[RMDB]
RNA sequence: GGGAACGACUCGAGUAGAGUCGAAAAAGAGGAAAGACUUAUUCAGUUGAAUAUUGUAGGCAAAAAGUCGAUAAAAUGGAUAUGCGAUUUUCUCUGGGAGCUGUAGGUGGAUUGAGUCUUCAUAUUAAUCGCGUGUAGAAUUCGUUCUACACGCGAUAAAAGAAACAACAACAACAAC
Reactivity to DMS in 0.01 (KOAc 150mM, MgCl2 10mM, bicine 150mM(pH8.5), 24C), signal-to-noise 1, nucleotides 027 to 126: a050g030a050g010g000a050a060a060g010a140c030u010u000a060u000u000c020a110g020u020u010g020a140a100u000a060u020u010g010u020a100g010g010c050a050a090a060a120a080g020u000c020g010a090u010a050a020a060a060u000g000g010a000u000a030u000g020c080g010a100u000u000u000u000c030u000c030u010g000g000g000a070g030c080u010g020u000a040g010g020u010g010g010a070u000u010g010a120g020u000c020u020u000c050a040u000a070u000u010a120
Structure probing data (DMS) for a 177-nucleotide construct. The data come from the RNA Mapping Database (RMDB), library OK2TST. For DMS the reverse transcriptase was MarathonRT. DMS (dimethyl sulfate) methylates the pairing face of unpaired adenines and cytosines.